[RMDB]
RNA sequence: GGGAACGACUCGAGUAGAGUCGAAAAAUGGGUUUCAUGGUAUGGUUGGCAUCUUCCUUGGGAGUGGCCACAGUGGUGGUGGCUUCAGGAAAGAGACUCCAACAGGGGCCAGCUGUGGGCCUUGGGCCCAAGACUACGGGUUCGCCCGUAGUCUUGGAAAAGAAACAACAACAACAAC
Reactivity to DMS in 0.01 (KOAc 150mM, MgCl2 10mM, bicine 150mM(pH8.5), 24C), signal-to-noise 6, nucleotides 027 to 126: a080u010g000g000g010u000u010u010c030a050u000g010g010u000a070u010g030g010u000u000g000g000c300a130u000c010u000u000c010c010u010u010g030g020g010a020g020u000g000g000c010c010a010c010a220g020u010g030g020u000g010g020u000g000g000c000u000u000c020a040g000g000a020a030a050g010a050g000a140c130u000c020c020a040a050c110a130g010g020g010g010c130c040a050g000c050u000g020u010g000g010g010c020c030u000u000g000g010g000c060
Reactivity to 2A3 in 0.01 (KOAc 150mM, MgCl2 10mM, bicine 150mM(pH8.5), 24C), signal-to-noise 2, nucleotides 027 to 126: a020u100g010g030g000u050u150u300c060a020u050g020g000u170a120u140g010g020u040u120g040g000c030a060u030c020u050u000c020c000u020u060g090g020g000a020g020u060g110g050c030c010a030c010a030g300u300g120g040u030g010g040u020g130g000c000u020u010c020a020g000g040a060a040a020g020a000g020a020c060u010c050c030a060a070c030a110g030g040g040g030c030c020a000g000c030u040g010u060g030g040g000c010c000u030u020g020g040g010c000
Chemical mapping of a 177-nucleotide RNA with DMS and 2A3. Source: RMDB library OK2TRN, as collected in RNAgym. The reactions ran in a buffer of 150 mM KOAc, 10 mM MgCl2 and 150 mM bicine (pH 8.5), at 24 C. Reactivities are given for positions 27 through 126.